[RMDB]
RNA sequence: GGGAACGACUCGAGUAGAGUCGAAAACUUCAUUCAUGGUGGCAGUAAAAUGUUUAUUGUGUUUGAAUGUGUUUAUGUAAGAGGAGCCGUACCUGUUGGUAUGUCUCAUUAUAAUGACACUACCUUCAAAUACCGCUAACUUCGGUUAGCGGUAUUUAAAAGAAACAACAACAACAAC
Reactivity to DMS in 0.01 (KOAc 150mM, MgCl2 10mM, bicine 150mM(pH8.5), 24C), signal-to-noise 3, nucleotides 027 to 126: c100u000u020c020a040u000u000c010a030u000g000g030u000g010g000c010a020g020u000a090a110a150a100u000g000u000u000u030a010u000u000g010u000g010u000u010u000g010a030a040u010g000u010g020u010u000u000a060u020g000u010a030a030g020a120g020g000a020g000c030c010g020u000a010c020c000u010g020u020u040g020g020u010a010u000g010u000c020u000c040a070u010u010a020u000a050a140u010g020a000c020a000c040u010a110c080c050u000u020c140
Reactivity to 2A3 in 0.01 (KOAc 150mM, MgCl2 10mM, bicine 150mM(pH8.5), 24C), signal-to-noise 8, nucleotides 027 to 126: c010u010u010c010a010u000u000c000a000u020g000g000u010g030g000c010a000g020u070a030a020a030a070u040g040u030u150u280a030u040u010g010u000g000u000u000u010g040a030a040u080g020u000g030u010u060u070a130u080g030u030a020a020g080a090g260g040a010g020c010c000g010u000a010c010c010u130g190u290u300g060g000u010a000u010g020u000c000u000c000a000u000u020a010u010a040a110u050g000a000c000a000c010u080a050c010c000u010u070c030
The record gives the reactivity of an RNA of 177 nucleotides to DMS and 2A3. It was measured as part of the RMDB libraries RFM100 and RFMREP. Values cover nucleotides 27 to 126.